[RMDB]
RNA sequence: GGGAACGACUCGAGUAGAGUCGAAAAGCUAGAAGGUUCGCCUUCUAGCAAAGAAAGCGGAAAACACCGAAAUAAAACGGUGAGGGCCGCAACCUCCCAUAAAAAGGAUCAACUUCGGUUGAUCCAACUCACCCUUUAUGUUCGCAUAAAGGGUGAGAAAAGAAACAACAACAACAAC
Reactivity to DMS in 0.01 (KOAc 150mM, MgCl2 10mM, bicine 150mM(pH8.5), 24C), signal-to-noise 1, nucleotides 027 to 126: g000c000u000a010g000a060a000g000g020u000u010c250g020c000c040u000u030c000u000a000g000c000a010a030a040g000a060a150a170g010c010g000g000a010a010a040a120c000a070c000c000g000a050a110a150u000a080a110a210a130c000g000g000u000g040a010g010g020g010c000c030g010c010a080a060c120c050u000c000c000c010a070u010a080a050a080a130a070g000g000a030u020c000a000a000c000u000u020c150g030g000u000u000g030a000u000c000c010a020a000
Reactivity to 2A3 in 0.01 (KOAc 150mM, MgCl2 10mM, bicine 150mM(pH8.5), 24C), signal-to-noise 2, nucleotides 027 to 126: g020c010u000a000g000a000a000g030g010u050u100c090g070c000c000u010u010c000u000a010g000c000a010a000a010g000a010a020a000g020c000g000g030a000a050a030a010c020a000c010c020g060a050a190a030u220a020a090a030a020c000g010g010u000g000a020g010g050g030c010c000g030c000a000a010c010c020u030c030c000c000a010u140a030a080a010a000a020g000g010a010u000c000a010a010c010u040u120c270g060g000u000u000g010a010u030c010c000a000a000
The data come from the RNA Mapping Database (RMDB), library M2PK50. The record gives the reactivity of an RNA of 177 nucleotides to DMS and 2A3. Values cover nucleotides 27 to 126. The DMS profile rests on 805 reads. The reactions ran in a buffer of 150 mM KOAc, 10 mM MgCl2 and 150 mM bicine (pH 8.5), at 24 C. In probing experiments dimethyl sulfate is read out at A N1 and C N3, which are open when not base-paired. High 2A3 reactivity points to a flexible backbone, as in loops and unpaired stretches. DMS adducts were read by reverse transcription with MarathonRT. For 2A3, 2,353 sequencing reads were counted.